Structure probing data (2A3) for a 207-nucleotide construct.
Reactivities are given for positions 27 through 156.
2A3 adducts were read by reverse transcription with SuperScript II with manganese.

RNA sequence: GGGAACGACUCGAGUAGAGUCGAAAACUGGCAGAGUUCUGCACAAGGAAGCGCCUGUGUUGCUGUGGGCGGAGGAAUGGACUGAGGGCUACAUUCGCUUCCUGUUGCCGCUGUAACUGCUUAUCACAAACUCAGUGGCUUAAAGCAACAGAGGCUCAGUAGUUCUGAACUUCGGUUCAGAACUACUAAAAGAAACAACAACAACAAC
Reactivity to 2A3 in 0.01 (KOAc 150mM, MgCl2 10mM, bicine 150mM(pH8.5), 24C), signal-to-noise 2, nucleotides 027 to 156: c040u040g020g000c010a010g070a060g170u210u260c040u020g030c020a030c020a110a080g130g040a170a040g060c080g010c050c020u120g020u010g020u120u020g000c010u030g000u240g080g020g030c050g050g010a020g040g040a020a020u020g020g000a020c050u060g030a100g070g050g000c000u030a030c010a030u010u000c050g030c110u070u040c000c000u070g070u060u030g000c000c000g000c010u010g000u040a070a060c060u030g010c040u050u110a060u130c040a020c050a120a080a000c070u040c030a000g010u000g000g000c000u040u080a160a090a000g020c010a010a010c010a010g040a000g000g000c020u030c040